[RMDB]
RNA sequence: GGGAACGACUCGAGUAGAGUCGAAAAACGGUGACUGUAUCCACGCUAGAGAUAUCGACGGUAUGUAUUGUAGAUGCUCUCAUGGUUAUACAGGCAUUAGAUGUCAGCAUGUAGUAUUAGUAGACUAUCAACGUUCAGAAAACCCAAACACUACAACAGACCUUAGGAUAUUCGUAUCCUAAGGUCUAAAAGAAACAACAACAACAAC
Reactivity to DMS in 0.01 (KOAc 150mM, MgCl2 10mM, bicine 150mM(pH8.5), 24C), signal-to-noise 2, nucleotides 027 to 156: a090c050g000g020u000g020a020c020u000g020u000a090u010c020c010a030c010g030c060u000a060g000a060g030a140u010a050u000c000g010a040c030g050g020u000a160u010g050u000a050u000u000g000u010a060g010a040u000g020c000u000c030u010c030a030u000g020g010u000u000a070u000a040c030a010g020g010c010a040u010u000a080g030a120u010g000u010c030a140g020c050a090u010g020u000a050g010u000a050u000u000a080g010u000a050g010a130c010u010a110u000c050a040a090c020g040u000u010c050a180g000a080a070a110a110c010c030c030a110a060a110c040a050c020u000a080c030a040a160c120
Reactivity to 2A3 in 0.01 (KOAc 150mM, MgCl2 10mM, bicine 150mM(pH8.5), 24C), signal-to-noise 5, nucleotides 027 to 156: a000c040g000g000u010g000a020c000u010g010u020a010u040c030c010a030c050g040c090u090a020g000a030g020a150u050a020u100c040g020a040c060g060g040u180a160u220g160u060a100u170u220g020u030a050g000a020u030g020c010u000c000u010c020a020u040g020g000u090u120a020u000a030c010a000g020g000c000a000u030u060a030g020a060u040g030u040c030a020g030c050a120u070g020u040a030g010u000a030u150u030a070g060u030a030g020a040c030u090a040u070c030a040a050c030g020u060u040c060a050g110a120a090a050a060c000c000c010a000a040a010c070a010c020u090a010c010a100a000c010
Chemical mapping of a 207-nucleotide RNA with DMS and 2A3.
2A3 adducts were read by reverse transcription with SuperScript II with manganese.
DMS adducts were read by reverse transcription with MarathonRT.
For 2A3, 7,335 sequencing reads were counted.
The reactions ran in a buffer of 150 mM KOAc, 10 mM MgCl2 and 150 mM bicine (pH 8.5), at 24 C.